Chemical mapping of a 177-nucleotide RNA with 2A3 and DMS. For 2A3, 1,439 sequencing reads were counted. For DMS the reverse transcriptase was MarathonRT. Values cover nucleotides 27 to 126.

[RMDB]
RNA sequence: GGGAACGACUCGAGUAGAGUCGAAAAUCACCCGGUGUUCGUGUACAUCCCUCCCAACGGAGAGUUGCGUGGAGGCGCCUGGGUGGUGAUCGAUCCGUCGAUCAACCCCGAGAAGAUGGAGAUGUACCUUAAGGGCAAGGUUCGCCUUGCCCUUAAGAAAAGAAACAACAACAACAAC
Reactivity to 2A3 in 0.01 (KOAc 150mM, MgCl2 10mM, bicine 150mM(pH8.5), 24C), signal-to-noise 2, nucleotides 027 to 126: u020c000a000c000c010c040g000g050u110g040u070u190c100g040u060g000u070a020c000a060u020c010c010c000u000c000c000c000a020a000c010g080g040a220g000a040g220u080u080g050c080g110u120g030g010a010g040g000c040g090c000c030u160g000g000g000u010g030g030u010g010a000u000c010g010a000u000c020c140g020u020c010g000a010u000c000a010a090c030c020c010c030g060a070g020a100a020g090a040u200g040g020a080g000a040u020g030u050a030c000
Reactivity to DMS in 0.01 (KOAc 150mM, MgCl2 10mM, bicine 150mM(pH8.5), 24C), signal-to-noise 2, nucleotides 027 to 126: u000c060a030c000c000c000g010g000u010g020u000u000c080g000u010g010u000a010c020a020u000c010c020c000u000c000c010c020a070a040c070g010g030a170g000a230g010u010u000g000c190g010u020g020g020a030g000g010c030g010c030c010u010g050g010g010u010g020g010u000g000a000u000c000g000a030u000c210c110g000u000c000g000a010u000c010a040a120c030c000c010c060g010a120g000a080a100g010a130u010g020g000a110g000a010u000g000u000a020c040